Notes
The record gives the reactivity of an RNA of 177 nucleotides to 2A3 and DMS. It was measured as part of the RMDB library OK1LIB. For DMS, 43,264 sequencing reads were counted. The RNA was probed in 150 mM KOAc, 10 mM MgCl2 and 150 mM bicine (pH 8.5) at 24 C. For 2A3, 39,837 sequencing reads were counted.
RNA sequence: GGGAACGACUCGAGUAGAGUCGAAAACUUGAACCCUUUGUUAGCUUGGUCAGCUGGGGUUCGUCCAUAAACUCGCUUAGGGGGUUUCGAAUAAAAGGGCCGUGGCUUAGUUUAUUGAUUCGAAUCAGUCUAAGCACGUCUUCGGAUGUGUUUAGACAAAAGAAACAACAACAACAAC
Reactivity to 2A3 in 0.01 (KOAc 150mM, MgCl2 10mM, bicine 150mM(pH8.5), 24C), signal-to-noise 8, nucleotides 027 to 126: c040u050u110g010a020a020c010c010c000u060u080u160g230u100u110a040g000c020u050u090g100g140u230c040a010g000c010u020g000g000g010g000u010u010c010g010u000c000c000a020u100a060a100a030c080u090c090g050c040u050u110a070g000g020g040g090g040u020u030u050c020g030a080a050u090a150a120a050a030g040g020g000c050c020g050u030g010g000c010u020u030a030g020u060u040u020a100u060u110g110a100u070u050c070g040a030a100u080c040a040
Reactivity to DMS in 0.01 (KOAc 150mM, MgCl2 10mM, bicine 150mM(pH8.5), 24C), signal-to-noise 9, nucleotides 027 to 126: c120u030u030g000a020a030c000c000c010u010u030u020g010u030u030a040g020c010u000u020g020g000u010c110a150g000c010u000g000g010g000g000u000u000c020g010u010c040c060a120u030a070a090a100c090u020c160g010c030u010u010a060g000g010g010g010g010u000u000u000c030g010a060a040u010a060a060a130a200g010g010g010c040c020g020u000g000g000c020u000u000a070g000u000u000u010a120u020u010g000a080u000u010c040g000a080a110u040c150a130